[RMDB]
Chemical mapping of a 207-nucleotide RNA with 2A3. The RNA was probed in 150 mM KOAc, 10 mM MgCl2 and 150 mM bicine (pH 8.5) at 24 C.
RNA sequence: GGGAACGACUCGAGUAGAGUCGAAAAGAAAGAAAGAAUCGAGCUGGCGCAGCCGCACGGGCAACCGUCAAUCCAGCACUUCACAAGUCUUGUCGUUCUGACAGGACAUCCAUCAACCCACCGGGAAAAAAGGACUACAGCUUCGGCUGUAGUCCAACUUUUUCUUCAUGUUCGCAUGAAGAAAAAGAAAAGAAACAACAACAACAAC
Reactivity to 2A3 in 0.01 (KOAc 150mM, MgCl2 10mM, bicine 150mM(pH8.5), 24C), signal-to-noise 1, nucleotides 027 to 156: g040a010a010a000g060a020a180a000g030a040a070u110c040g020a020g010c010u000g000g010c080g010c050a040g070c060c060g020c000a040c050g020g000g000c040a040a080c020c000g030u060c010a020a040u020c000c010a010g030c030a020c060u050u080c060a120c030a230a120g010u010c000u010u000g000u000c010g110u170u300c180u300g010a020c000a000g000g000a000c000a010u000c010c020a020u060c020a030a140c010c010c040a030c100c030g000g010g080a120a070a060a000a000a000g010g000a000c000u010a000c020a000g030c000u020u120c220g120g000c000u010g010u010a010g000u000c000c000a000a000